[RMDB]
RNA sequence: GGGAACGACUCGAGUAGAGUCGAAAAUACGGCAUCUGCCGCUGAGGAAUUCAAAGGUAGUAUCGAGGCUUACACAUAUCCCAAUGCUUUCGCGGAUUGUGAUGGUUCACAAGAGAUAGCACAGGGCUUGUACAUUAACCAACAGGAUCGUAAAUCACCUUGUGCCAAGUUUCGACUUGGCACAAGGAAAAGAAACAACAACAACAAC
Reactivity to 2A3 in 0.01 (KOAc 150mM, MgCl2 10mM, bicine 150mM(pH8.5), 24C), signal-to-noise 2, nucleotides 027 to 156: u120a030c010g000g000c000a120u080c060u150g060c010c040g030c080u060g050a100g070g030a260a110u210u130c120a100a000a130g010g000u000a080g000u030a070u090c120g070a030g000g000c010u100u130a050c020a000c050a140u120a100u080c030c000c000a000a110u110g020c030u090u230u200c050g000c050g060g060a080u000u050g030u040g030a110u020g010g160u110u120c010a000c030a030a030g000a040g000a150u060a030g010c030a030c080a050g000g000g020c070u020u080g020u000a030c020a090u190u140a140a030c020c100a000a070c000a090g140g000a090u070c030g080u250a060a050a100u000c020a060

An RNA of 207 nucleotides, treated with 2A3 and read out base by base. Values cover nucleotides 27 to 156. It was measured as part of the RMDB library OK3TST. The reactions ran in a buffer of 150 mM KOAc, 10 mM MgCl2 and 150 mM bicine (pH 8.5), at 24 C. For 2A3 the reverse transcriptase was SuperScript II with manganese.